[RMDB]
RNA sequence: GGGAACGACUCGAGUAGAGUCGAAAAAAGAGCAGUUAGCGGAAAAUCACCGUAAAAUGUUGAUUGCCAUGGCACAAGAUUUACGAGUAAUUAUGGUGAAAUUGGCAGACCGCUUGCAUAAUAUGCGGAGCCAGUGCUACUUCGGUAGCACUGGCUCAAAAGAAACAACAACAACAAC
Reactivity to 2A3 in 0.01 (KOAc 150mM, MgCl2 10mM, bicine 150mM(pH8.5), 24C), signal-to-noise 1, nucleotides 027 to 126: a000a000g090a000g000c000a000g000u090u100a000g070c000g050g000a200a030a000a050u090c050a030c000c150g000u090a000a060a020a000u090g110u100u010g040a210u030u250g000c030c010a010u090g080g000c020a000c050a270a030g000a010u120u090u020a100c010g090a000g100u050a040a220u100u190a000u030g000g000u000g000a000a000a300u080u050g080g070c020a030g080a100c000c000g000c000u000u030g000c000a000u200a300a070u300a230u230g000c010g030
Source: RMDB library OK1LIB, as collected in RNAgym. An RNA of 177 nucleotides, treated with 2A3 and read out base by base.